[RMDB]
RNA sequence: GGGAACGACUCGAGUAGAGUCGAAAAUCGCGUGGACAUCAAGAACAACGCUCCAAUUGGCGGGGCAACGCAACUGGCGACGUUCACUGUCAAAGAGAAGUCGGUUAACGCUAUCACGGGCGUUGACGAAUCGUGGGGCGAUGAGUGCACUAUUAGCAGAGUUCAGUUUAUUCGUAAACUGAACUCUAAAAGAAACAACAACAACAAC
Reactivity to DMS in 0.01 (KOAc 150mM, MgCl2 10mM, bicine 150mM(pH8.5), 24C), signal-to-noise 2, nucleotides 027 to 156: u000c050g040c050g030u010g010g000a110c040a150u010c060a080a090g000a120a180c020a120a200c030g000c010u000c030c020a070a300u000u010g000g010c040g010g000g020g000c090a030a040c010g010c000a110a180c120u000g010g000c020g020a030c030g000u000u000c040a010c020u010g030u000c000a020a020a120g010a100g010a060a180g020u000c040g010g030u000u000a000a000c000g000c000u000a070u000c120a150c250g000g030g010c000g010u000u000g010a010c020g050a070a040u000c030g000u000g030g020g060g030c020g020a110u000g000a110g020u010g000c010a040c080u010a080u010u000a130g020c190
Reactivity to 2A3 in 0.01 (KOAc 150mM, MgCl2 10mM, bicine 150mM(pH8.5), 24C), signal-to-noise 3, nucleotides 027 to 156: u150c070g020c070g000u010g030g060a020c030a130u110c080a110a100g020a140a050c080a040a010c090g010c000u000c000c010a060a130u100u080g050g010c030g010g020g030g000c070a040a000c010g010c020a030a120c090u150g110g030c040g020a100c040g040u040u020c050a060c160u010g030u000c000a030a050a000g160a010g020a110a010g080u050c040g020g000u030u030a000a000c000g000c000u060a060u290c070a050c150g070g000g000c000g000u020u010g000a000c000g000a040a040u070c040g040u100g000g010g010g000c020g010a030u080g030a040g030u090g000c000a020c090u130a100u180u180a060g040c010
Chemical mapping of a 207-nucleotide RNA with DMS and 2A3. 2A3 adducts were read by reverse transcription with SuperScript II with manganese. The RNA was probed in 150 mM KOAc, 10 mM MgCl2 and 150 mM bicine (pH 8.5) at 24 C. It was measured as part of the RMDB library OK3TST.